[RMDB]
RNA sequence: GGGAACGACUCGAGUAGAGUCGAAAAGAUAUGGACGAUAAUACGAGCGAUAAGCUGCUAUUCGGAAACGAAUGUCAGCUUUUGACGCUCGUUAUCGUCCUAAGUCAAACUCAUCUUCGGAUGAGAACGAUCCAAACUAGUUCGCUAGUUUGGAUCGAAAAGAAACAACAACAACAAC
Reactivity to 2A3 in 0.01 (KOAc 150mM, MgCl2 10mM, bicine 150mM(pH8.5), 24C), signal-to-noise 3, nucleotides 027 to 126: g010a010u030a020u120g000g000a010c010g020a010u050a100a090u270a200c030g000a000g000c100g070a060u020a290a000g010c010u020g000c020u030a020u020u030c000g050g040a060a050a060c000g010a010a000u020g050u100c020a010g010c000u050u020u050u090g170a070c090g000c000u000c010g000u010u010a000u000c000g000u020c000c000u000a000a000g020u020c020a010a000a130c010u000c010a020u000c000u050u080c300g210g020a000u020g000a010g010a040a060
Reactivity to DMS in 0.01 (KOAc 150mM, MgCl2 10mM, bicine 150mM(pH8.5), 24C), signal-to-noise 3, nucleotides 027 to 126: g010a040u000a300u010g000g030a040c010g000a020u000a030a130u020a080c080g010a010g020c000g030a160u000a020a010g020c000u010g000c010u000a020u010u010c010g010g000a160a150a160c000g000a010a000u000g000u000c000a000g000c000u000u020u010u000g010a190c120g030c000u000c000g020u000u000a010u000c000g010u000c000c000u000a000a050g000u000c010a150a140a170c010u000c000a000u000c000u000u020c190g010g000a010u000g010a020g010a080a130